Conditions: 150 mM KOAc, 10 mM MgCl2 and 150 mM bicine (pH 8.5), 24 C. An RNA of 177 nucleotides, treated with DMS and 2A3 and read out base by base. The 2A3 profile rests on 1,734 reads. 2A3 adducts were read by reverse transcription with SuperScript II with manganese. For DMS, 1,903 sequencing reads were counted. Values cover nucleotides 27 to 126. Reactivities are rounded to 0.1 and cut off at 0 and 3.
RNA sequence: GGGAACGACUCGAGUAGAGUCGAAAAGACAAUAGCGUAGGGAACCAAGCAAAGAGGUAAGAAAUCCCACGGUUGAAGGCUUGGUUCUAGCCGUGGGAAGAAGAAGUCCCACUCCCUACGCCGAUAACUAUAUUCCGAGGUUCGCCUCGGAAUAUAGAAAAGAAACAACAACAACAAC
Reactivity to DMS in 0.01 (KOAc 150mM, MgCl2 10mM, bicine 150mM(pH8.5), 24C), signal-to-noise 3, nucleotides 027 to 126: g010a110c110a130a150u000a050g010c020g020u000a000g000g010g010a060a040c000c000a010a050g000c010a140a110a110g010a110g030g030u010a080a040g030a090a100a120u010c000c000c000a020c010g010g020u000u000g010a070a030g010g020c010u020u010g000g000u000u000c160u010a040g000c010c030g010u000g000g000g010a040a040g010a090a100g000a140a110g000u010c010c010c020a300c030u000c000c010c000u000a020c010g010c010c080g000a070u000a040a100
Reactivity to 2A3 in 0.01 (KOAc 150mM, MgCl2 10mM, bicine 150mM(pH8.5), 24C), signal-to-noise 1, nucleotides 027 to 126: g130a020c040a040a160u050a170g000c010g020u010a000g000g000g000a010a010c000c030a020a010g020c030a010a100a100g200a130g010g000u130a170a050g090a070a090a030u020c000c000c010a000c010g000g050u070u210g140a030a010g050g000c040u060u060g000g000u040u070c010u030a000g030c000c010g010u010g000g010g010a000a000g020a000a010g020a000a010g040u050c000c000c020a010c000u000c000c000c000u000a010c000g000c000c030g040a030u050a160a000